[RMDB]
RNA sequence: GGGAACGACUCGAGUAGAGUCGAAAAGGAGGCGAGCCUGGCACAGCGCGGCGCGCUGGAGCGCCAGAUCUUCGAGCACGCCUUCGCCUCCCGCCUCAAGUACCUCCACGCCGGCAUGGAGACGCCGGCACCUGGUUACGUUCGCGUGACCAGGUGCAAAAGAAACAACAACAACAAC
Reactivity to DMS in 0.01 (KOAc 150mM, MgCl2 10mM, bicine 150mM(pH8.5), 24C), signal-to-noise 8, nucleotides 027 to 126: g000g000a010g000g000c000g000a060g010c070c030u000g010g010c010a110c040a050g020c020g010c050g020g010c160g010c020g000c010u010g010g000a100g010c180g020c010c020a030g000a110u030c090u010u010c120g010a150g010c030a100c060g000c020c020u000u010c000g010c100c040u010c010c010c020g000c060c020u020c060a070a050g020u020a100c050c010u010c030c020a190c090g010c010c010g010g000c010a130u000g010g000a100g030a100c110g000c010c020g000
Reactivity to 2A3 in 0.01 (KOAc 150mM, MgCl2 10mM, bicine 150mM(pH8.5), 24C), signal-to-noise 9, nucleotides 027 to 126: g010g000a000g000g000c000g000a010g000c010c010u020g010g000c010a010c010a040g010c020g020c050g270g110c130g020c000g000c070u030g030g030a090g110c090g010c010c010a020g010a090u060c080u110u110c090g040a030g030c040a020c070g020c010c000u010u020c010g010c000c010u020c000c000c000g040c000c010u080c030a050a040g040u050a080c000c010u030c020c010a030c050g020c010c000g010g010c020a060u100g050g030a090g030a060c060g010c000c000g010
Source: RMDB library OK1LIB, as collected in RNAgym. Structure probing data (DMS and 2A3) for a 177-nucleotide construct. The DMS profile rests on 24,607 reads. 2A3 adducts were read by reverse transcription with SuperScript II with manganese.